[RMDB]
RNA sequence: GGGAACGACUCGAGUAGAGUCGAAAAAGAGCGAAAGGCACAAGACUUCGAACAUUAUAGCAGUUAGUAGUUGCCUAAACCCAUUGCAAUAUAUGGGACAGUAGAGGUCGCAAGCCUAUACUGUGCGAAAAGUCGCAAGGUUUCGACCUUGCGACAAUAGACUUUGUAGGUUCGCCUACAAAGUCUAAAAAGAAACAACAACAACAAC
Reactivity to 2A3 in 0.01 (KOAc 150mM, MgCl2 10mM, bicine 150mM(pH8.5), 24C), signal-to-noise 2, nucleotides 027 to 156: a000g100a020g020c060g050a120a080a000g000g050c020a010c010a040a070g070a020c030u060u050c070g120a120a030c050a120u230u220a110u170a110g080c070a010g000u010u070a040g020u020a020g010u090u030g020c000c000u030a050a030a050c000c010c000a010u010u030g020c010a010a000u030a010u010a000u110g010g010g010a000c000a010g000u010a000g010a010g010g000u100c040g010c120a050a000g000c000c000u000a000u000a020c000u000g000u020g030c010g030a030a080a000a110g040u020c000g000c010a000a010g040g030u020u080u130c170g030a080c000c000u000u000g000c000g010a000c000a000a000
Reactivity to DMS in 0.01 (KOAc 150mM, MgCl2 10mM, bicine 150mM(pH8.5), 24C), signal-to-noise 1, nucleotides 027 to 156: a100g000a080g050c000g010a070a130a060g020g000c040a060c070a120a150g000a030c040u010u000c010g000a080a080c080a180u000u000a080u000a100g000c020a060g010u000u000a070g010u000a060g020u000u000g010c010c040u010a030a130a230c010c000c000a010u000u010g000c050a130a160u000a170u000a010u000g010g000g030a060c000a000g020u010a030g060a000g100g090u000c060g020c300a090a230g000c020c000u000a030u030a010c000u000g000u020g000c080g000a030a050a070a090g000u000c000g000c010a050a020g000g010u000u000u010c260g010a050c000c030u000u000g000c000g010a010c010a000a080
An RNA of 207 nucleotides, treated with 2A3 and DMS and read out base by base. 2A3 adducts were read by reverse transcription with SuperScript II with manganese.